RNA sequence: GGGAACGACUCGAGUAGAGUCGAAAAGAAAGGCGGUAACCCUUCUGAGCUAAAUUAGGUAGGGGUUUAACGGUAGUAGGGGCACUUUAGUGCGAGAACCUGCUUCCUAUUUGGGGAGUGGAACGGCUAAGGUGUGAUGAGUGCUUUAGCAAGCAUCUCUCAUUGGCCCAACCACAUACACCUGAGACAAGGCCCGUCUGCCAUAGCACAAGGGCUUCACACCUCCAUGUGAGCCCUUGUUGUUUUGUCUAUCACUCCUGAGCUAAAGUAUCCUGUUCGCAGGAUACAAAAGAAACAACAACAACAAC
Reactivity to 2A3 in 0.01 (KOAc 150mM, MgCl2 10mM, bicine 150mM(pH8.5), 24C), signal-to-noise 3, nucleotides 027 to 266: g040a030a090a000g010g010c020g000g050u080a040a060c010c000c010u060u060c060u070g060a050g030c070u170a180a190a160u190u050a070g050g030u040a030g020g030g010g010u110u090u080a070a010c040g010g000u040a000g030u020a020g040g020g010g020c010a010c010u190u190u150a050g010u060g130c040g040a070g060a070a060c000c000u000g020c000u020u010c000c000u020a120u070u160u230g010g000g000g000a050g010u010g010g000a060a010c000g010g000c010u020a050a000g080g010u040g040u020g060a050u110g010a020g030u010g010c010u090u070u070a050g030c010a030a000g020c000a050u060c020u010c000u010c050a050u030u090g020g000c010c000c010a020a020c020c000a030c010a020u140a040c060a080c000c020u020g030a020g010a040c050a060a030g050g010c030c000c010g030u010c000u010g030c010c000a070u080a020g020c010a000c010a010a000g020g000g000c010u170u150c000a010c000a000c000c050u090c060c020a020u030g000u000g000a000g000c000c020c000u000u000g010u000u000g000u000u040u030u020g030u010c020u040a130u160c040a050c040u050c020c040u060g100a030g100c040u100a020a150a010
Reactivity to DMS in 0.01 (KOAc 150mM, MgCl2 10mM, bicine 150mM(pH8.5), 24C), signal-to-noise 9, nucleotides 027 to 266: g000a090a100a050g010g010c040g010g010u010a090a120c060c000c010u000u010c050u010g010a090g020c090u010a050a120a120u010u010a080g010g000u000a030g010g000g010g010u000u000u010a070a090c300g000g020u010a030g030u000a030g020g000g010g010c010a010c010u010u020u010a080g030u000g010c010g010a110g030a100a220c050c000u000g000c010u000u000c000c000u010a110u010u010u010g000g000g000g010a070g020u000g000g000a030a280c300g000g010c000u000a010a030g010g010u010g000u000g000a010u010g000a040g020u000g010c000u010u010u010a090g010c120a030a040g000c000a010u000c020u000c000u000c020a060u000u000g000g000c000c000c050a060a300c030c030a030c060a080u000a170c120a140c020c010u000g010a080g000a110c150a110a110g010g010c110c010c020g000u010c010u000g010c070c020a110u000a030g010c020a030c020a010a010g000g000g000c000u010u010c010a000c000a060c130c100u020c230c190a150u000g010u000g000a030g000c000c000c000u000u000g000u000u000g010u000u000u000u000g000u000c040u010a180u010c090a120c110u000c020c030u000g000a110g010c070u010a070a150a160